Background: Structure probing data (DMS) for a 177-nucleotide construct. Source: RMDB library TTRDEL, as collected in RNAgym. For DMS, 961 sequencing reads were counted. Reactivities are given for positions 27 through 126. Conditions: 150 mM KOAc, 10 mM MgCl2 and 150 mM bicine (pH 8.5), 24 C.
RNA sequence: GGGAACGACUCGAGUAGAGUCGAAAAGAUAUGGACGAGAGCGAUAAGCUCGGUAUCGGAAACGAUACUGAGCUUUUGACGCUCGAGUCCUAAGUCAAACAUGUAGAAUGUUCGCAUUCUACAUGAACACGAAAUGCAACUUCGGUUGCAUUUCGUGAAAAGAAACAACAACAACAAC
Reactivity to DMS in 0.01 (KOAc 150mM, MgCl2 10mM, bicine 150mM(pH8.5), 24C), signal-to-noise 1, nucleotides 027 to 126: g000a000u000a300u000g000g000a000c000g000a240g000a000g000c000g020a140u000a020a020g010c020u000c000g000g020u000a000u000c040g000g010a070a050a160c000g000a000u000a020c000u000g010a000g000c010u000u000u000u000g010a210c090g000c000u020c000g010a300g010u000c000c000u000a010a090g020u000c010a130a080a180c030a020u000g000u070a010g000a060a010u010g000u010u000c300g000c010a000u000u000c000u000a000c000a000u000g000a040a200